RNA sequence: GGGAACGACUCGAGUAGAGUCGAAAAAAAGUUAGCGUACAAGAGUCGCCGUGAGUACGCUAUGGUUCCGUGAGACUCUACUCGAGCGUAUCACGGAACCCACGUACAUACCGUACGUGCUAUAAAACGUCCAUUCUUAUUUCGAUAAGAAUGGACGAAAAGAAACAACAACAACAAC
Reactivity to DMS in 0.01 (KOAc 150mM, MgCl2 10mM, bicine 150mM(pH8.5), 24C), signal-to-noise 3, nucleotides 027 to 126: a090a030a060g010u000u000a010g010c000g000u000a020c010a070a140g010a160g020u000c010g010c020c010g010u000g000a220g010u000a000c000g020c000u000a010u010g010g000u010u000c020c010g000u000g010a210g000a050c000u020c000u010a020c000u000c030g000a000g020c060g030u010a090u000c020a050c030g000g000a030a030c020c060c000a000c000g000u000a000c010a080u010a100c300c180g000u000a000c000g010u000g010c120u010a080u010a050a030a060a120
Reactivity to 2A3 in 0.01 (KOAc 150mM, MgCl2 10mM, bicine 150mM(pH8.5), 24C), signal-to-noise 3, nucleotides 027 to 126: a000a000a010g080u020u020a000g000c000g010u000a000c020a030a050g020a060g140u090c030g020c090c020g070u070g020a020g010u000a000c000g010c000u000a020u030g060g010u070u010c040c040g000u040g010a060g010a010c000u010c000u000a010c000u010c000g000a010g000c010g000u020a060u040c020a020c000g020g020a010a030c020c000c010a000c000g000u000a000c000a050u160a230c040c080g000u010a010c000g020u000g000c010u090a130u080a160a110a020a020
Chemical mapping of a 177-nucleotide RNA with DMS and 2A3. DMS adducts were read by reverse transcription with MarathonRT.